[RMDB]
Structure probing data (2A3) for a 207-nucleotide construct. 2A3 adducts were read by reverse transcription with SuperScript II with manganese. Values cover nucleotides 27 to 156. As a SHAPE reagent, 2A3 marks flexible, mostly unpaired nucleotides at the ribose 2'-OH. The 2A3 profile rests on 395 reads. Conditions: 150 mM KOAc, 10 mM MgCl2 and 150 mM bicine (pH 8.5), 24 C.
RNA sequence: GGGAACGACUCGAGUAGAGUCGAAAAAUGCCACCCCAGUAUCAUCUUUGUACUCUUACCUUUGUGUUGAGAAGGGAUACAUGUCACUUAUAAAACCUGGGUAUGACUACGCAAGCCACCUUCACAUUUGGGAUAGAAGAUUCUACAAAAGUAAAAACUCAUUACGCCGUUUCGACGGCGUAAUGAGAAAAGAAACAACAACAACAAC
Reactivity to 2A3 in 0.01 (KOAc 150mM, MgCl2 10mM, bicine 150mM(pH8.5), 24C), signal-to-noise 1, nucleotides 027 to 156: a010u120g060c010c000a060c000c000c000c000a010g060u050a030u050c120a000u000c040u050u050u130g040u040a070c000u000c000u070u090a150c040c000u120u170u140g070u020g010u030u130g170a090g010a070a030g000g000g040a030u060a080c020a060u170g040u020c060a020c170u080u100a070u060a300a130a000a000c000c030u040g130g010g000u070a060u100g090a040c010u070a050c120g010c080a060a030g000c020c000a020c000c010u040u080c050a010c010a160u000u010u050g000g010g020a040u060a020g000a070a000g070a000u020u000c010u110a040c040a050a070a000a000g060u110a000a180a190a000a000